Background:
The record gives the reactivity of an RNA of 177 nucleotides to DMS and 2A3. Values cover nucleotides 27 to 126. For DMS the reverse transcriptase was MarathonRT. 2A3 adducts were read by reverse transcription with SuperScript II with manganese. Conditions: 150 mM KOAc, 10 mM MgCl2 and 150 mM bicine (pH 8.5), 24 C. For 2A3, 1,182 sequencing reads were counted.
RNA sequence: GGGAACGACUCGAGUAGAGUCGAAAAUAGUAACGGCGAGUGAAGCGGGAAGAGCUCAAGCUUAAAAUCUCCGUGCAAGUUUUGCGCGGCGAAUUGUAGUCUAUAGAGGCGUGAUCAGUGUGGGCGCGGAUAGGUGAAAGUUCGCUUUCACCUAUCCAAAAGAAACAACAACAACAAC
Reactivity to DMS in 0.01 (KOAc 150mM, MgCl2 10mM, bicine 150mM(pH8.5), 24C), signal-to-noise 2, nucleotides 027 to 126: u020a060g020u000a100a050c120g010g000c030g010a050g020u020g030a100a110g000c050g030g000g000a090a110g000a160g030c030u020c080a080a060g000c010u010u020a090a040a090a130u000c000u000c010c000g050u000g010c020a020a160g000u010u000u010u000g000c000g000c000g000g000c060g000a020a090u000u010g000u000a050g000u010c070u000a130u010a100g000a070g000g000c050g040u020g020a060u000c090a050g020u000g040u000g010g000g020c160g000c230
Reactivity to 2A3 in 0.01 (KOAc 150mM, MgCl2 10mM, bicine 150mM(pH8.5), 24C), signal-to-noise 1, nucleotides 027 to 126: u140a000g100u010a100a030c030g010g020c020g010a020g050u080g030a040a000g000c030g000g030g000a040a040g040a010g030c020u060c070a030a010g000c040u060u090a010a060a040a100u020c010u010c000c000g000u000g000c000a030a220g050u080u220u300u090g010c000g000c020g030g010c000g000a000a020u030u080g000u040a000g000u000c010u020a100u050a120g050a020g070g040c040g020u020g030a040u050c010a010g020u010g000u070g080g040g010c070g010c070